Source: RMDB libraries RFM100 and RFMREP, as collected in RNAgym.
Chemical mapping of a 177-nucleotide RNA with 2A3 and DMS.
The reactions ran in a buffer of 150 mM KOAc, 10 mM MgCl2 and 150 mM bicine (pH 8.5), at 24 C.
2A3 adducts were read by reverse transcription with SuperScript II with manganese.
For DMS the reverse transcriptase was MarathonRT.
[RMDB]
RNA sequence: GGGAACGACUCGAGUAGAGUCGAAAAUAUACCGGGUGGAAUGAAUAACAUGUUCUUUUGCUCUGUGCAUGGAGAUGCCACCAUGCGCUCUCGGGCUCUUCUGUUUUUGCUCUUCGUGCUUCUGCCUUUUCUCUCUUAAAUUCGUUUAAGAGAGAAAAAAAGAAACAACAACAACAAC
Reactivity to 2A3 in 0.01 (KOAc 150mM, MgCl2 10mM, bicine 150mM(pH8.5), 24C), signal-to-noise 7, nucleotides 027 to 126: u220a010u040a050c010c030g020g010g000u030g000g040a060a070u050g030a040a040u180a140a070c070a090u170g050u100u060c020u030u100u070u080g020c010u040c040u060g040u040g020c010a010u020g020g000a080g010a070u130g060c020c000a020c000c000a000u010g010c010g000c010u020c010u020c040g050g020g000c020u020c000u070u020c030u030g140u040u050u010u080u100g020c000u020c010u040u050c020g040u020g020c020u020u000c010u030g010c000c000u000
Reactivity to DMS in 0.01 (KOAc 150mM, MgCl2 10mM, bicine 150mM(pH8.5), 24C), signal-to-noise 4, nucleotides 027 to 126: u020a130u030a090c020c010g010g010g020u000g000g010a070a050u030g000a090a050u030a090a150c160a060u010g000u000u010c010u010u000u000u010g010c020u010c040u010g020u000g010c030a030u020g010g010a080g010a080u010g000c070c080a130c010c020a030u000g000c020g010c030u010c070u000c120g010g000g010c030u010c040u000u010c020u010g010u000u000u010u000u010g000c040u010c030u000u000c070g000u000g010c030u000u000c010u000g010c040c040u000